[RMDB]
RNA sequence: GGGAACGACUCGAGUAGAGUCGAAAACGCCUGCGUGCAACAACUCGAUUUCUUCCGGAGUGAGCGGAUUACCCUGGGCAUCCGUACGCGAGUCGGAGCCAACGAGCAGGAUGUCGGUGGCGCCGUCCAAUGUAUCCAACUUCGGUUGGAUACAUUGAAAAGAAACAACAACAACAAC
Reactivity to 2A3 in 0.01 (KOAc 150mM, MgCl2 10mM, bicine 150mM(pH8.5), 24C), signal-to-noise 6, nucleotides 027 to 126: c060g030c010c010u100g030c040g030u090g030c040a090a040c010a050a060c050u010c040g100a100u060u200u020c040u110u030c050c030g070g000a080g060u120g030a040g010c010g000g020a030u070u110a110c010c010c030u070g040g020g000c010a050u000c010c010g060u070a040c030g010c020g050a020g020u020c010g000g020a030g010c000c000a020a020c030g010a020g060c040a040g040g110a060u130g090u060c010g010g010u020g010g010c040g010c020c010g010u000c010
Reactivity to DMS in 0.01 (KOAc 150mM, MgCl2 10mM, bicine 150mM(pH8.5), 24C), signal-to-noise 9, nucleotides 027 to 126: c130g010c020c010u000g010c050g020u000g010c080a080a080c110a100a100c050u000c020g000a100u000u000u000c070u000u010c060c040g010g010a100g010u010g010a140g010c030g010g010a090u000u000a100c050c030c040u010g010g000g010c110a060u000c010c020g010u000a040c070g010c100g000a110g010u000c010g000g010a090g010c020c020a050a050c050g000a070g000c030a070g000g000a090u000g010u000c030g010g000u000g000g010c030g010c020c030g010u010c060
An RNA of 177 nucleotides, treated with 2A3 and DMS and read out base by base.
The RNA was probed in 150 mM KOAc, 10 mM MgCl2 and 150 mM bicine (pH 8.5) at 24 C.
Reactivities are rounded to 0.1 and cut off at 0 and 3.
For DMS the reverse transcriptase was MarathonRT.
For 2A3 the reverse transcriptase was SuperScript II with manganese.
Reactivities are given for positions 27 through 126.